[RMDB]
RNA sequence: GGGAACGACUCGAGUAGAGUCGAAAACCAUUCCUUAUACCUUGAGUAUUGCUGAAUUCAGUUUAGCGUGCAUACUCUUGGCUAUUCUCAUAGUGAUUGUCAAAUUUGGAGUUACUUAUUCGUCAAUAAAACACUACCACGUUCGCGUGGUAGUGAACCAAUCUAUUGACUUCGGUCAAUAGAUUGGAAAAGAAACAACAACAACAAC
Reactivity to DMS in 0.01 (KOAc 150mM, MgCl2 10mM, bicine 150mM(pH8.5), 24C), signal-to-noise 3, nucleotides 027 to 156: c050c040a220u010u000c020c020u010u000a190u000a060c010c010u000u000g010a040g040u000a010u000u000g050c000u000g000a050a070u000u000c210a220g020u000u000u010a050g010c020g060u000g060c230a200u000a020c000u000c010u000u000g020g020c020u000a100u000u010c050u010c040a170u000a090g020u020g010a080u000u000g000u010c030a060a060a180u010u000u000g000g000a140g030u000u010a070c080u010u000a100u000u000c070g010u000c040a050a120u000a040a070a100a140c010a000c000u000a020c010c000a010c010g020u000u000c300g040c030g060u000g000g010u000a000g000u000g000a030a060
Reactivity to 2A3 in 0.01 (KOAc 150mM, MgCl2 10mM, bicine 150mM(pH8.5), 24C), signal-to-noise 7, nucleotides 027 to 156: c020c000a010u060u090c020c020u140u110a080u040a140c000c010u020u030g000a010g000u020a040u090u150g020c000u010g070a110a080u230u200c060a140g130u070u060u100a050g020c020g030u070g050c010a010u000a000c000u000c000u010u010g000g010c000u020a030u100u080c090u020c090a150u100a100g090u070g090a110u080u070g110u100c050a030a090a160u130u090u140g040g010a060g060u110u070a110c030u110u100a070u180u120c060g090u030c090a100a090u100a130a100a010a010c010a000c000u000a000c000c000a000c020g000u020u040c150g010c000g120u010g000g000u000a000g000u000g000a000a000